[RMDB]
RNA sequence: GGGAACGACUCGAGUAGAGUCGAAAAGAACGCCACUUCGGUGGCGUUCGAAGAUCAACCACACGUAGAUCACUAUCGUGUGAGACAUCGAUAGAUGUCAAAUGGUCCGGAAGUUCGCUUCCGGAAAUCUACCUUUGAGCUUCGGCUCAAAGGUAGAAAAAGAAACAACAACAACAAC
Reactivity to DMS in 0.01 (KOAc 150mM, MgCl2 10mM, bicine 150mM(pH8.5), 24C), signal-to-noise 1, nucleotides 027 to 126: g000a000a000c000g010c000c000a020c020u010u010c200g030g010u000g010g000c000g030u000u000c000g000a040a120g000a110u000c100a090a130c210c000a010c010a000c010g030u000a010g000a190u010c300a070c060u010a010u010c010g010u000g030u000g020a080g010a010c000a010u000c000g000a130u030a040g040a000u010g010u020c000a060a080a110u010g020g000u000c000c000g030g000a010a000g000u000u020c300g020c020u010u000c010c000g010g020a000a010a010
Reactivity to 2A3 in 0.01 (KOAc 150mM, MgCl2 10mM, bicine 150mM(pH8.5), 24C), signal-to-noise 1, nucleotides 027 to 126: g000a010a010c010g030c000c010a000c000u030u160c260g120g000u010g000g000c020g020u000u000c000g000a020a000g000a020u050c060a000a090c030c000a000c010a000c010g010u010a000g030a160u190c110a110c300u070a030u290c030g010u000g010u020g020a040g030a000c000a000u010c000g080a030u120a250g010a010u000g010u010c000a000a060a120u170g040g030u000c000c010g010g010a000a010g070u040u130c160g060c130u010u040c000c000g010g020a040a000a000
Structure probing data (DMS and 2A3) for a 177-nucleotide construct. The 2A3 profile rests on 835 reads. For 2A3 the reverse transcriptase was SuperScript II with manganese. The reactions ran in a buffer of 150 mM KOAc, 10 mM MgCl2 and 150 mM bicine (pH 8.5), at 24 C. For DMS the reverse transcriptase was MarathonRT.